[RMDB]
RNA sequence: GGGAACGACUCGAGUAGAGUCGAAAAAUACUUCUCAGGAUGGCGCGUUGCAGUCCAACAAGAUCCAGGGACCGUACAGAAUUUUCCUAUACCUCGAGUCGGGUUUGGAAUCUAAGGUUGACUCGCUAAAACUUUACGUGGUUCGCCACGUAAAGAAUCUAAUGUAUUCCUUCGGGAAUACAUUAGAAAAAGAAACAACAACAACAAC
Reactivity to 2A3 in 0.01 (KOAc 150mM, MgCl2 10mM, bicine 150mM(pH8.5), 24C), signal-to-noise 3, nucleotides 027 to 156: a000u060a020c020u050u000c010u000c020a020g060g030a060u060g070g080c050g000c050g090u060u070g030c070a040g110u030c070c000a020a020c020a050a030g050a050u030c030c010a030g000g010g030a000c040c020g030u120a020c030a090g160a280a130u020u010u030u020c000c000u050a050u090a110c010c030u010c040g000a000g010u010c020g020g000g000u030u070u030g030g010a040a030u020c060u110a130a070g080g020u050u110g010a020c010u020c030g000c040u070a100a090a030a040c010u000u000u000a000c000g000u000g000g020u010u030c090g020c050c010a000c000g000u000a000a000a000g000a000a010
Reactivity to DMS in 0.01 (KOAc 150mM, MgCl2 10mM, bicine 150mM(pH8.5), 24C), signal-to-noise 2, nucleotides 027 to 156: a110u000a050c050u000u000c020u020c020a160g010g020a080u010g040g050c110g020c150g000u000u000g020c030a140g060u000c010c030a060a100c050a110a200g000a070u010c020c030a160g020g040g010a030c050c050g010u000a220c050a150g030a140a080u000u010u000u000c000c020u000a130u010a050c050c000u000c010g040a050g020u000c030g010g020g010u000u000u000g030g010a010a050u000c050u020a080a020g000g020u000u000g010a080c040u010c030g000c060u010a040a040a110a110c000u000u000u000a000c000g030u010g010g030u000u000c300g020c010c030a000c000g000u000a000a010a010g000a060a070
The record gives the reactivity of an RNA of 207 nucleotides to 2A3 and DMS. The reactions ran in a buffer of 150 mM KOAc, 10 mM MgCl2 and 150 mM bicine (pH 8.5), at 24 C. 2A3 adducts were read by reverse transcription with SuperScript II with manganese. For DMS the reverse transcriptase was MarathonRT. Values cover nucleotides 27 to 156. For DMS, 3,188 sequencing reads were counted. High 2A3 reactivity points to a flexible backbone, as in loops and unpaired stretches. It was measured as part of the RMDB library M2RFPK. The 2A3 profile rests on 2,394 reads.